Conditions: 150 mM KOAc, 10 mM MgCl2 and 150 mM bicine (pH 8.5), 24 C. This 207-nucleotide RNA was probed chemically with 2A3. Reactivities are given for positions 27 through 156. It was measured as part of the RMDB library OK3TST. Reactivities are rounded to 0.1 and cut off at 0 and 3. The 2A3 profile rests on 573 reads.
[RMDB]
RNA sequence: GGGAACGACUCGAGUAGAGUCGAAAAAGAGAAAGACAUUAGACUACCUCAGACCAGCAGGAGGAUGGUCUGUGGGAAGAGCAUUGGAGUCUGAGCCAAGCAUGAAUCUCAGCUGUCCCUUCCUUGCUGUAUCACCUUGGGUUCUUCGUCUCAUUGACACCGCUAGCAUGUUCGCAUGCUAGCGGUGAAAAGAAACAACAACAACAAC
Reactivity to 2A3 in 0.01 (KOAc 150mM, MgCl2 10mM, bicine 150mM(pH8.5), 24C), signal-to-noise 1, nucleotides 027 to 156: a020g090a010g080a010a110a000g060a000c070a040u120u160a010g050a050c080u140a050c090c000u010c000a000g000a020c000c000a000g000c020a000g010g000a080g000g000a000u000g000g030u000c030u030g010u090g010g020g110a040a030g050a000g000c090a170u000u100g040g010a020g010u030c080u090g040a000g110c010c000a010a000g060c020a030u150g040a100a050u070c040u010c040a030g000c020u010g100u000c000c010c000u120u100c000c000u050u100g020c040u020g040u030a180u140c030a020c040c000u020u000g010g000g000u010u100c080u070u100c020g060u000c020u050c020a030u010u020g000a010